Chemical mapping of a 177-nucleotide RNA with 2A3 and DMS.
For 2A3 the reverse transcriptase was SuperScript II with manganese.
Source: RMDB libraries RFM100 and RFMREP, as collected in RNAgym.
For DMS the reverse transcriptase was MarathonRT.
RNA sequence: GGGAACGACUCGAGUAGAGUCGAAAAGGGGGGCGUGCGUGAAAUUGCCGCCCUUUGGAUCACUUUUCUGUGCGGGGCUUUUCUCAACAAAACAGUCCAGUGGGGUAUGGCUUUGCAUAUCCAGUGCGGUACCACAUGUAUUCGUACAUGUGGUACCAAAAGAAACAACAACAACAAC
Reactivity to 2A3 in 0.01 (KOAc 150mM, MgCl2 10mM, bicine 150mM(pH8.5), 24C), signal-to-noise 5, nucleotides 027 to 126: g010g000g000g000g010g000c010g030u290g020c010g060u160g180a090a100a110u180u140g010c010c000g000c000c000c000u020u010u000g010g000a020u040c010a020c060u050u050u080u060c040u070g080u110g040c030g000g010g040g000c030u030u020u120u020c040u010c000a020a160c020a040a130a030a030c030a040g050u020c010c000a040g020u070g040g010g020g030u030a020u040g020g040c050u060u080u180g030c000a010u000a020u030c010c020a020g070u030g050c030
Reactivity to DMS in 0.01 (KOAc 150mM, MgCl2 10mM, bicine 150mM(pH8.5), 24C), signal-to-noise 3, nucleotides 027 to 126: g000g000g010g000g000g000c020g000u010g010c000g010u010g020a080a080a180u000u030g010c020c000g010c000c000c010u000u000u010g000g000a300u030c090a100c050u000u010u010u010c050u010g000u010g010c050g000g000g000g000c080u010u010u010u020c020u000c060a080a070c160a040a060a040a100c150a070g000u000c070c040a060g000u000g020g000g000g000u010a010u000g020g010c040u010u020u010g000c020a020u000a030u000c010c020a130g010u000g020c260